[RMDB]
Chemical mapping of a 207-nucleotide RNA with 2A3 and DMS. The RNA was probed in 150 mM KOAc, 10 mM MgCl2 and 150 mM bicine (pH 8.5) at 24 C. For 2A3, 6,921 sequencing reads were counted. It was measured as part of the RMDB library RNAMAK. For 2A3 the reverse transcriptase was SuperScript II with manganese. DMS adducts were read by reverse transcription with MarathonRT. The DMS profile rests on 3,543 reads.

RNA sequence: GGGAACGACUCGAGUAGAGUCGAAAAUCCUAAGUCAGAGUUGCCAGCGCAUCGAUGAGCAGUACUACCCACCGCUCGGAAACGAGCGAGGUACUGCGAGAUGCGGGCACUCUCUGAUAUGGAAAAAGAAAACACUAGUCUUCGGACUAGUGUUUUCGCUAUGGGUAAGGUUCGCCUUACCCAUAGCAAAAGAAACAACAACAACAAC
Reactivity to 2A3 in 0.01 (KOAc 150mM, MgCl2 10mM, bicine 150mM(pH8.5), 24C), signal-to-noise 5, nucleotides 027 to 156: u040c010c000u040a100a010g040u000c000a000g000a000g010u010u020g000c020c020a180g210c080g000c030a000u010c020g240a300u250g150a050g010c000a000g000u010a000c020u050a050c040c070c070a080c020c030g000c010u000c010g030g040a080a100a050c000g000a000g000c000g000a000g000g000u010a000c000u000g000c000g000a010g000a010u000g000c000g000g000g000c000a000c000u010c000u000c000u000g010a010u030a130u160g070g050a090a070a030a080a060g030a000a010a010a000c000a000c020u030a000g000u000c010u020u130c300g020g000a000c000u000a000g000u000g000u000u000u000u000c000
Reactivity to DMS in 0.01 (KOAc 150mM, MgCl2 10mM, bicine 150mM(pH8.5), 24C), signal-to-noise 2, nucleotides 027 to 156: u000c000c000u000a050a250g010u000c000a020g000a030g070u000u000g000c000c000a060g020c000g010c010a000u000c000g020a280u000g000a290g000c000a000g010u000a010c000u000a020c010c030c050a300c140c000g000c000u010c000g000g000a190a060a290c010g020a020g030c000g000a030g010g010u000a000c010u000g000c040g000a120g020a010u010g010c020g050g000g020c000a020c100u000c010u030c000u000g010a050u000a290u000g000g010a080a100a080a130a150g010a020a020a000a010c000a020c000u000a000g010u000c010u000u010c300g030g000a030c000u000a000g020u000g000u000u000u000u000c000